[RMDB]
RNA sequence: GGGAACGACUCGAGUAGAGUCGAAAAUGUCUGCUGUGUUCAAAAUCAAGGAAUAAAACAAUGUGUCUUGUGCUGCUAGAUAAAGAGCUCUUUAGAAGUUGGUUAUAUCUUACUGACUGACACUGACUUCACCUUCAUGAUUUUCUGCCAGCUGCAAGAGGAUUUAUGCUUUCGAGCAUAAAUCCUCAAAAGAAACAACAACAACAAC
Reactivity to 2A3 in 0.01 (KOAc 150mM, MgCl2 10mM, bicine 150mM(pH8.5), 24C), signal-to-noise 1, nucleotides 027 to 156: u090g050u000c040u020g070c000u060g060u010g000u160u060c060a110a090a070a030u050c090a030a030g040g010a100a130u190a150a090a070a030c120a080a070u130g010u010g010u050c060u020u090g030u100g020c010u000g060c050u030a000g010a030u080a030a110a030g020a030g010c010u000c000u090u240u040a190g010a300a000g080u030u060g030g010u020u070a080u010a010u080c000u050u070a020c020u050g060a010c000u000g000a000c000a030c060u040g030a070c040u020u060c080a020c070c010u020u060c040a020u150g060a040u010u010u010u110c030u080g040c030c010a040g010c000u000g000c040a060a020